[RMDB]
RNA sequence: GGGAACGACUCGAGUAGAGUCGAAAAGCUGGCUCGGAGUUUGACACUGCAAUUAGGACGUUCUUGUCAGGCUUCAGGCUCCCAGGAGAGGCGCAGAAGAUUGACAGGCUGAUGGAGAAGUUUGCAGGGUUCUAACUGACUUCGGUCAGUUAGAACCAAAAGAAACAACAACAACAAC
Reactivity to DMS in 0.01 (KOAc 150mM, MgCl2 10mM, bicine 150mM(pH8.5), 24C), signal-to-noise 1, nucleotides 027 to 126: g010c110u010g010g010c010u000c030g030g000a050g010u000u000u000g010a060c050a140c140u000g010c080a050a070u010u000a110g020g010a300c070g010u000u000c030u010u000g000u000c000a030g000g010c000u000u000c030a060g000g010c010u020c030c010c020a130g000g020a160g000a050g000g020c050g000c050a080g030a030a040g010a060u000u000g020a040c050a030g000g000c300u000g000a100u010g020g120a160g000a080a140g010u000u030u000g010c040a050g000